[RMDB]
RNA sequence: GGGAACGACUCGAGUAGAGUCGAAAAUUGGUCUUUCCGAAGAAACUACCACCGGUGUUCACCACUUAUACAGAAUGGUCAAAGAAGGCAAGUUAAAGGUUCCUGCCAUUAACGUUAACGACUCCGAACGGUCAUUAAUGUUCGCAUUAAUGACCGUAAAAGAAACAACAACAACAAC
Reactivity to DMS in 0.01 (KOAc 150mM, MgCl2 10mM, bicine 150mM(pH8.5), 24C), signal-to-noise 3, nucleotides 027 to 126: u010u010g020g020u010c100u000u010u030c030c030g030a070a100g020a090a080a090c030u000a030c030c020a060c120c060g010g000u000g000u000u000c130a080c020c020a050c110u010u000a090u000a110c180a110g020a050a080u020g010g000u000c110a080a070a100g010a050a110g000g020c040a030a070g020u000u010a020a080a120g000g000u000u000c020c010u000g030c040c030a060u000u020a040a030c090g000u000u020a050a120c140g010a070c050u000c020c030g000a140
Reactivity to 2A3 in 0.01 (KOAc 150mM, MgCl2 10mM, bicine 150mM(pH8.5), 24C), signal-to-noise 2, nucleotides 027 to 126: u030u060g080g010u040c010u000u070u020c020c000g030a050a030g010a060a070a030c050u030a030c020c000a020c050c000g020g010u020g030u070u000c030a020c030c040a030c040u100u070a090u020a180c030a030g130a020a120u080g060g010u030c020a100a080a000g080a040a030g050g000c020a040a040g040u070u080a120a060a000g020g010u030u110c000c010u030g050c000c000a030u030u080a050a010c020g040u000u110a020a010c040g060a040c020u000c000c000g040a040